Description: The record gives the reactivity of an RNA of 177 nucleotides to DMS and 2A3. High DMS reactivity at an A or C suggests that its Watson-Crick edge is free. It was measured as part of the RMDB library TTRDEL.
RNA sequence: GGGAACGACUCGAGUAGAGUCGAAAAGAUAUGGAUCAGUUGUCAGAGGUGUAAUCGGAAACGAUUACUCCUCUUGGAUUUACUGAGUCCUAAGUCAAACGCUUCGCAACUUCGGUUGCGAAGCGAACCAUGUGCAAAAGUUCGCUUUUGCACAUGGAAAAGAAACAACAACAACAAC
Reactivity to DMS in 0.01 (KOAc 150mM, MgCl2 10mM, bicine 150mM(pH8.5), 24C), signal-to-noise 3, nucleotides 027 to 126: g020a040u000a300u000g000g010a300u000c000a000g020u000u000g000u000c000a040g000a000g010g000u010g010u000a000a000u000c000g020g000a070a090a220c000g010a010u010u000a010c000u000c000c000u000c000u000u000g020g010a020u000u000u000a010c000u000g000a040g010u010c000c000u000a090a140g000u000c020a100a120a270c010g010c000u000u000c000g010c000a020a000c000u000u020c170g040g010u000u000g000c010g000a000a000g020c000g000a010a040
Reactivity to 2A3 in 0.01 (KOAc 150mM, MgCl2 10mM, bicine 150mM(pH8.5), 24C), signal-to-noise 2, nucleotides 027 to 126: g030a010u060a020u170g030g000a000u020c010a010g010u020u000g020u020c060a020g020a000g050g000u000g010u010a000a000u020c000g000g010a110a070a010c000g000a010u000u010a000c010u010c010c030u010c000u000u010g010g000a010u110u090u220a010c000u000g010a010g190u030c010c000u040a180a010g070u020c050a200a040a080c020g020c010u020u000c010g010c000a000a010c000u070u090c300g160g000u010u020g010c000g000a000a020g010c000g000a000a000